RNA sequence: GGGAACGACUCGAGUAGAGUCGAAAAAACCCACCGCGAUGAUGAUCAGUGCGGCCUAGUCCUGAGCGUGAAGCAGGUGUGUGGCUGUCCGUCUAGCUGACUCCCUAUGGAGUUUGUCCGUGCGGACGUUAAUCUUGUGGUUCGCCACAAGAUUAACAAAAGAAACAACAACAACAAC
Reactivity to DMS in 0.01 (KOAc 150mM, MgCl2 10mM, bicine 150mM(pH8.5), 24C), signal-to-noise 3, nucleotides 027 to 126: a050a060c030c010c010a170c070c040g010c030g010a060u010g010a090u000g010a080u020c070a080g010u000g000c070g010g000c080c040u000a130g000u000c030c020u000g000a100g000c070g000u010g010a060a110g030c000a060g020g010u010g010u010g020u000g010g020c060u000g000u000c020c020g000u000c060u000a110g000c020u000g000a020c010u000c010c000c300u020a190u000g030g010a050g010u010u000u000g000u000c030c070g010u010g010c030g000g030a040c070
Reactivity to 2A3 in 0.01 (KOAc 150mM, MgCl2 10mM, bicine 150mM(pH8.5), 24C), signal-to-noise 2, nucleotides 027 to 126: a000a010c030c000c000a030c040c000g000c050g050a120u110g000a030u050g000a030u150c040a020g060u050g140c020g000g000c010c000u030a020g030u020c020c010u030g040a050g020c060g060u100g140a090a010g060c020a020g030g000u020g030u030g010u030g030g030c000u020g030u010c000c000g020u010c020u030a020g010c000u010g010a020c020u050c010c000c030u110a170u300g020g000a050g000u000u050u050g030u000c040c010g050u060g030c030g000g010a010c000